[RMDB]
RNA sequence: GGGAACGACUCGAGUAGAGUCGAAAAGCGGUAUGUAAGCAUGUAGUGCGUGGGUGGCUUGCACUAUAAUCUCAGACAUCAAAAGUUUAAUUGGCGAAAAUAACUACGCUCUCGCUGCGUAAUCGAAGAAUAGUAGAUUAGACGCUUCAUCGCCGCCGCAUAAGUCUCGGUUCGCCGAGACUUAUGCAAAAGAAACAACAACAACAAC
Reactivity to 2A3 in 0.01 (KOAc 150mM, MgCl2 10mM, bicine 150mM(pH8.5), 24C), signal-to-noise 2, nucleotides 027 to 156: g000c000g000g030u040a030u090g090u160a010a050g030c050a060u080g030u160a010g050u000g010c030g020u020g050g000g000u000g000g050c010u060u080g010c000a040c030u110a060u030a200a070u040c060u020c060a080g050a150c010a030u050c030a110a090a000a010g090u140u180u140a170a110u120u030g060g020c030g050a040a050a010a070u110a050a000c070u090a030c020g000c020u000c010u010c060g040c030u050g000c010g030u000a030a020u050c070g000a030a000g010a170a010u020a110g070u000a000g020a070u050u020a050g050a080c080g000c000u020u030c010a050u030c010g000c050c000g000c020c030
Annotation
Conditions: 150 mM KOAc, 10 mM MgCl2 and 150 mM bicine (pH 8.5), 24 C. An RNA of 207 nucleotides, treated with 2A3 and read out base by base.